[RMDB]
RNA sequence: GGGAACGACUCGAGUAGAGUCGAAAACAUGGCUAGCCAGUAAAGCCAAAACUGCUAUAGCAAUCAAUGCCAAAAGAAAAUGCAGAAUCUGCAACAUAAGAAAUCCGUCAGGGAUGAAAUUCAGUCACUGUCAGUCAUCAUUCGUGAUGACUGACAGAAAAGAAACAACAACAACAAC
Reactivity to DMS in 0.01 (KOAc 150mM, MgCl2 10mM, bicine 150mM(pH8.5), 24C), signal-to-noise 2, nucleotides 027 to 126: c120a170u000g020g000c050u000a110g030c110c050a030g020u040a050a110a050g000c000c050a040a100a030a120c020u000g000c050u000a180u000a260g020c010a040a060u000c180a110a070u000g010c010c060a040a030a060a130g020a140a140a100a070u000g000c050a050g020a110a060u010c080u000g030c070a030a060c090a050u010a040a090g000a070a120a030u020c040c010g000u010c300a040g010g000g000a010u000g000a000a080a250u020u000c150a140g020u000c190a050
Reactivity to 2A3 in 0.01 (KOAc 150mM, MgCl2 10mM, bicine 150mM(pH8.5), 24C), signal-to-noise 1, nucleotides 027 to 126: c030a050u050g040g000c040u000a010g070c090c030a060g000u120a090a070a000g030c010c000a000a000a000a200c010u000g010c000u050a060u060a110g000c010a030a100u250c030a080a090u160g000c000c020a010a040a000a070g110a070a160a030a010u100g020c000a020g010a130a080u020c010u060g090c040a070a010c050a110u290a130a110g050a100a100a000u010c040c050g230u300c170a060g200g000g000a020u030g020a070a030a000u110u130c070a010g190u060c000a030